Chemical mapping of a 177-nucleotide RNA with DMS and 2A3. Source: RMDB library TTRDEL, as collected in RNAgym. The reactions ran in a buffer of 150 mM KOAc, 10 mM MgCl2 and 150 mM bicine (pH 8.5), at 24 C.

RNA sequence: GGGAACGACUCGAGUAGAGUCGAAAAGAUAUGGACGCCUGUUGUCAGCUUUGUCGGAAACGACCAAGCUUGGAUUUACAGUGCGUCCUAAGUCAAAUCCCUUUCGUUCUUCGGAACGAAAGGGAAAGUUGUCCUAAGUGUUCGCACUUAGGACAACAAAAGAAACAACAACAACAAC
Reactivity to DMS in 0.01 (KOAc 150mM, MgCl2 10mM, bicine 150mM(pH8.5), 24C), signal-to-noise 1, nucleotides 027 to 126: g000a020u000a250u000g000g000a030c030g000c010c000u020g000u000u000g010u000c030a010g000c010u020u000u000g000u000c000g000g000a100a020a180c000g000a020c000c070a010a000g000c000u010u010g030g000a050u020u000u010a020c000a010g000u020g030c000g010u000c000c010u030a000a090g000u020c040a120a070a150u000c000c000c000u000u000u000c000g010u000u000c000u000u010c170g020g010a000a000c000g000a010a020a010g000g000g000a020a000a020
Reactivity to 2A3 in 0.01 (KOAc 150mM, MgCl2 10mM, bicine 150mM(pH8.5), 24C), signal-to-noise 2, nucleotides 027 to 126: g030a020u050a030u090g000g000a000c010g030c000c000u040g090u090u030g230u230c020a010g010c000u040u010u010g000u010c000g040g030a020a050a030c000g020a000c000c030a010a000g030c040u050u160g120g020a080u010u300u180a010c000a000g060u070g170c010g000u020c000c000u000a000a000g000u000c000a000a030a140u030c020c040c000u000u000u000c010g010u010u000c000u000u040c230g160g000a010a000c020g000a000a010a010g010g010g030a070a010a000